[RMDB]
RNA sequence: GGGAACGACUCGAGUAGAGUCGAAAAACGCGGAGUACGCUCCGCGACAACACUUCUUUCGACCCGCUAACCGAGACCUAUGGGUCGUUAAAUUACGUCUCUAUCCUACUCACAUAACAUCGCACAAAAAACGUGGUUCGGUUCGCCGAACCACGAACGAUCCUAGGUUGUUCGCAACCUAGGAUCGAAAAGAAACAACAACAACAAC
Reactivity to 2A3 in 0.01 (KOAc 150mM, MgCl2 10mM, bicine 150mM(pH8.5), 24C), signal-to-noise 1, nucleotides 027 to 156: a000c010g000c000g010g000a000g010u060a010c200g060c030u000c000c000g030c060g010a000c060a130a000c010a060c040u040u200c000u080u300u220c020g000a000c000c000c000g110c190u170a010a000c040c050g030a010g010a010c010c010u050a110u300g000g000g000u010c000g100u000u010a000a000a020u120u020a000c040g010u000c000u020c000u010a190u100c010c010u040a090c050u060c040a010c040a130u240a160a110c010a140u300c090g000c230a080c030a040a000a020a130a110a080c000g000u000g020g000u000u000c000g000g050u050u020c150g000c150c010g020a000a000c010c000a000c030g000a000a010